[RMDB]
RNA sequence: GGGAACGACUCGAGUAGAGUCGAAAAUGGGGCGGGCUCAGGCUGUGAUGUGUGAGCCUGCACUGCCGCCGCGCAGCCACCUCCGAUUCCACAACUACAACCAAUUCUGUGCCAUCCGGGCGGUGAGGCUAGUGACACAAUUCGUUGUGUCACUAGCAAAAGAAACAACAACAACAAC
Reactivity to 2A3 in 0.01 (KOAc 150mM, MgCl2 10mM, bicine 150mM(pH8.5), 24C), signal-to-noise 2, nucleotides 027 to 126: u120g000g000g050g020c010g000g010g000c010u000c010a030g050g000c000u090g040u110g260a210u180g060u060g080u010g020a010g000c000c010u010g000c000a010c000u050g000c020c030g000c020c030g060c020g000c010a020g030c010c020a040c000c010u000c010c000g050a080u100u000c000c030a080c020a080a080c000u140a060c010a100a050c020c000a050a040u130u060c050u090g100u090g030c030c010a020u060c030c000g040g020g000c020g040g020u040g030a070g050
Reactivity to DMS in 0.01 (KOAc 150mM, MgCl2 10mM, bicine 150mM(pH8.5), 24C), signal-to-noise 3, nucleotides 027 to 126: u010g010g010g000g030c030g030g000g030c040u010c020a060g010g030c020u000g020u010g020a120u010g060u000g020u000g010a050g020c040c010u010g010c010a030c040u000g000c060c030g010c040c020g020c110g010c060a100g000c060c020a110c050c020u000c040c000g010a150u000u000c020c000a070c100a040a060c090u000a100c120a040a140c050c040a070a120u010u010c060u000g010u000g000c040c030a060u000c090c080g020g020g020c020g020g020u010g000a100g000